[RMDB]
RNA sequence: GGGAACGACUCGAGUAGAGUCGAAAACAGGUCCGGAAUCAGUCUCCAUGGCUUCCAUCCUGGGCCUCUUCUUCGGGGGCCCUCCCUCUUCGUUCCUCUUCUUUGAUCUCAACAUUCCGAGGACGUUAACCAAUGUCGUUCGCGACAUUGAAAAGAAACAACAACAACAAC
Reactivity to 2A3 in 0.01 (KOAc 150mM, MgCl2 10mM, bicine 150mM(pH8.5), 24C), signal-to-noise 9, nucleotides 027 to 129: c050a020g010g030u030c030c040g020g040a020a060u150c040a040g060u020c030u040c100c070a110u170g030g000c000u060u010c020c020a080u050c010c030u040g000g000g000c010c010u000c000u160u050c010u080u090c080g010g000g000g000g000c010c000c000u030c000c000c000u020c010u060u030c010g040u060u040c000c000u020c010u090u030c030u060u100u120g110a140u060c050u010c080a050a160c020a160u150u050c040c020g010a020g020g010a050c030g040u030u060a040a020c030
Reactivity to DMS in 0.01 (KOAc 150mM, MgCl2 10mM, bicine 150mM(pH8.5), 24C), signal-to-noise 9, nucleotides 027 to 129: c090a080g030g010u010c080c060g000g050a080a060u020c080a080g030u010c030u060c090c090a110u050g000g010c050u020u020c060c050a050u050c030c030u040g030g010g030c020c010u000c030u040u040c110u000u050c140g030g000g000g000g020c020c020c020u030c020c010c030u030c030u040u030c050g010u020u000c020c000u000c080u020u000c050u020u030u070g010a060u040c030u010c060a080a110c120a120u040u050c070c030g010a060g000g030a030c070g000u010u000a070a100c130
An RNA of 170 nucleotides, treated with 2A3 and DMS and read out base by base. The reactions ran in a buffer of 150 mM KOAc, 10 mM MgCl2 and 150 mM bicine (pH 8.5), at 24 C. The 2A3 profile rests on 118,420 reads. For DMS, 108,327 sequencing reads were counted. DMS adducts were read by reverse transcription with MarathonRT.